[RMDB]
RNA sequence: GGGAACGACUCGAGUAGAGUCGAAAACAAGCCAGUAUCAUUGGCUGUCUGCGUAUCCCCAACUCACAGACGGUCUCUCUAAGCUGGUAGAUCGAAAACCUAAAUACGAACAACUUAAGUUCUGUCGCAGUUAUUAUUGUUUCGACAAUAAUAACUGAAAAGAAACAACAACAACAAC
Reactivity to 2A3 in 0.01 (KOAc 150mM, MgCl2 10mM, bicine 150mM(pH8.5), 24C), signal-to-noise 9, nucleotides 027 to 126: c050a050a020g020c000c000a020g020u060a080u220c080a080u070u060g000g000c000u000g010u000c000u020g010c020g040u100a220u210c030c010c000c010a030a060c030u050c030a030c000a010g010a010c000g010g000u010c020u000c000u000c030u140a070a060g020c000u010g000g030u040a040g030a100u120c100g060a020a050a060a090c010c030u080a080a080a030u210a090c070g030a040a010c030a050a050c050u170u210a160a030g010u030u000c030u060g080u050c060g000
Reactivity to DMS in 0.01 (KOAc 150mM, MgCl2 10mM, bicine 150mM(pH8.5), 24C), signal-to-noise 9, nucleotides 027 to 126: c100a110a170g010c010c000a020g010u000a140u010c260a040u010u000g000g000c010u000g010u000c000u000g020c090g010u000a080u010c030c020c020c040a100a150c190u010c080a080c010a020g000a030c010g010g010u000c010u010c060u010c120u020a070a300g010c010u000g000g020u000a060g010a090u010c080g000a070a050a080a100c040c030u000a030a060a070u020a090c120g000a030a030c050a090a120c180u010u020a080a090g000u000u000c010u010g010u020c190g000

About this RNA
Chemical mapping of a 177-nucleotide RNA with 2A3 and DMS. For 2A3 the reverse transcriptase was SuperScript II with manganese. DMS adducts were read by reverse transcription with MarathonRT. The data come from the RNA Mapping Database (RMDB), libraries RFM100 and RFMREP. Conditions: 150 mM KOAc, 10 mM MgCl2 and 150 mM bicine (pH 8.5), 24 C.